RNA sequence: GGGAACGACUCGAGUAGAGUCGAAAAGUGCAAGAAGUACGUGCUUGGACAUUUAAACAAGGUAUGACUGCACCUCAAUGUGCUGGUAUCAUUCAUACUGAUUUUGAACGUGGAUUUAUCCGUGCCGCGACUCCUCCAGAUUCGUCUGGAGGAGUCGAAAAGAAACAACAACAACAAC
Reactivity to 2A3 in 0.01 (KOAc 150mM, MgCl2 10mM, bicine 150mM(pH8.5), 24C), signal-to-noise 3, nucleotides 027 to 126: g000u060g010c070a010a100g050a030a050g060u060a070c050g000u140g030c040u010u010g000g050a050c010a250u120u150u150a040a140a010c050a110a040g070g000u060a000u020g000a020c030u010g000c000a000c000c150u250c080a070a270u180g070u050g030c010u020g080g050u110a080u150c100a080u140u000c020a000u000a080c010u080g100a200u050u040u050u160g090a070a030c070g090u050g000g060a120u060u040u050a010u030c030c050g010u050g020c000c080g020
Reactivity to DMS in 0.01 (KOAc 150mM, MgCl2 10mM, bicine 150mM(pH8.5), 24C), signal-to-noise 2, nucleotides 027 to 126: g030u000g060c010a050a070g020a030a080g000u010a120c100g000u000g020c020u000u000g000g010a070c050a090u020u000u000a020a070a140c300a070a150g000g000u010a000u000g000a100c110u000g000c220a000c040c220u030c140a110a080u040g000u040g020c050u000g060g020u000a050u010c070a050u000u040c020a000u000a020c040u000g000a200u010u020u000u000g000a000a070c050g000u030g000g000a050u020u000u010a150u020c040c000g000u010g000c050c030g000